[RMDB]
RNA sequence: GGGAACGACUCGAGUAGAGUCGAAAACGGGCGACCGGCUCCGAGGCGAGAUCUACAGGCCGCUGGGUGGACGGUAUCCUGGCAGUAGGAGACUGGACAUCGAGAUCAAAUUAUUGCCUGAGCAUGGAGACGCUUUCAUGGAAGGUGGUUCGGACAGCUUUGCAUUAGAGUUCGCUCUAAUGCAAAGAAAAGAAACAACAACAACAAC
Reactivity to DMS in 0.01 (KOAc 150mM, MgCl2 10mM, bicine 150mM(pH8.5), 24C), signal-to-noise 1, nucleotides 027 to 156: c060g000g050g000c010g000a040c000c000g020g030c020u020c020c020g000a090g010g030c020g000a060g040a250u000c020u000a230c010a050g020g060c030c140g000c020u000g010g020g000u000g000g020a090c000g000g000u000a100u000c030c010u000g010g010c180a190g030u000a030g010g020a060g000a060c000u000g040g030a140c000a030u000c000g020a050g010a130u010c050a050a070a170u010u000a120u000u000g000c010c030u030g000a170g000c080a110u010g000g000a130g120a200c040g000c000u000u010u000c030a100u000g030g020a080a300g000g000u010g000g040u000u000c050g000g010a140c050a140g000
Reactivity to 2A3 in 0.01 (KOAc 150mM, MgCl2 10mM, bicine 150mM(pH8.5), 24C), signal-to-noise 3, nucleotides 027 to 156: c020g010g020g020c020g120a010c000c030g010g110c060u010c020c020g030a020g010g000c020g020a100g020a130u030c020u060a060c030a020g010g010c020c030g000c020u040g050g000g020u000g010g000a010c000g020g000u020a020u000c000c000u040g070g130c130a040g050u260a010g040g010a000g020a020c000u000g040g000a010c000a000u030c050g120a020g010a060u180c160a070a120a100u200u160a130u110u230g000c000c000u000g010a010g060c070a130u210g030g000a020g000a010c020g000c000u080u210u110c110a100u240g000g030a020a010g030g020u040g020g000u000u030c030g000g030a010c010a030g000
Overview
Source: RMDB library ARCHII, as collected in RNAgym. The record gives the reactivity of an RNA of 207 nucleotides to DMS and 2A3.